[RMDB]
RNA sequence: GGGAACGACUCGAGUAGAGUCGAAAACUUGCUUCAUAUUGUGAUGUUUACAGAGCUAAUUUUUUGGUUUCAUUUCCAAUACCUUUCCUUAACCUUGUCAAUGUAGCCCUCGCAAUAAGGCAAUGGAUAUGGAACUAUGGUUCGCCAUAGUUCCAUAAAAAGAAACAACAACAACAAC
Reactivity to 2A3 in 0.01 (KOAc 150mM, MgCl2 10mM, bicine 150mM(pH8.5), 24C), signal-to-noise 2, nucleotides 027 to 126: c000u010u020g020c010u060u090c010a030u040a020u040u060g020u020g040a050u050g020u020u150u020a060c040a050g010a040g050c070u090a090a090u100u060u010u010u060u030g040g000u060u070u110c090a080u070u040u010c030c000a000a050u010a080c030c000u000u090u160c040c000u050u080a060a100c000c030u040u040g030u080c030a050a150u040g000u020a010g030c030c010c010u000c040g020c010a000a030u040a040a020g020g000c010a020a040u090g040g000a060
Reactivity to DMS in 0.01 (KOAc 150mM, MgCl2 10mM, bicine 150mM(pH8.5), 24C), signal-to-noise 2, nucleotides 027 to 126: c060u000u010g000c010u000u000c130a120u000a090u000u010g010u000g020a050u000g000u000u000u010a040c060a040g010a240g000c050u000a020a020u000u000u000u000u000u000g010g010u000u010u020c090a090u000u000u000c030c050a060a060u000a070c060c010u000u000u000c010c020u020u000a070a090c100c070u000u020g000u020c070a050a110u010g000u000a040g010c040c020c030u000c040g010c040a020a060u000a040a040g010g000c030a040a040u000g010g000a200